[RMDB]
RNA sequence: GGGAACGACUCGAGUAGAGUCGAAAAGCUUAAAUCACAGUCCAGGUAAGUUCUGUAGGCAACUAGCUUGAUCUGAAGUCACAUCCGGUUCUCAGCUGAAAUCUCAGUCUGGUUCUCAGCAGCACUGACUGUACCGAGGGUUCGCCCUCGGUACAGUAAAAGAAACAACAACAACAAC
Reactivity to DMS in 0.01 (KOAc 150mM, MgCl2 10mM, bicine 150mM(pH8.5), 24C), signal-to-noise 2, nucleotides 027 to 126: g010c020u000u010a080a080a110u000c040a090c070a020g030u010c020c030a070g010g050u000a070a100g010u010u000c070u000g010u010a090g010g020c090a090a090c130u020a070g010c010u000u000g000a050u000c040u000g000a060a070g000u000c080a050c090a070u000c030c060g000g000u000u000c040u000c080a100g050c090u000g000a040a070a070u020c050u000c040a060g000u000c020u000g000g000u000u000c070u010c050a090g010c070a080g020c080a090c120u000g000
Reactivity to 2A3 in 0.01 (KOAc 150mM, MgCl2 10mM, bicine 150mM(pH8.5), 24C), signal-to-noise 1, nucleotides 027 to 126: g000c050u120u100a040a070a110u160c000a030c040a060g050u050c050c000a020g010g080u120a080a070g030u070u060c050u080g040u030a030g010g000c040a030a040c070u020a020g100c020u050u050g030a100u040c030u050g060a030a000g070u070c020a020c000a160u030c030c000g000g010u020u020c020u000c040a010g020c010u050g030a030a170a130u050c060u020c020a060g090u040c050u070g080g020u080u000c050u000c030a000g000c000a000g000c030a050c080u040g060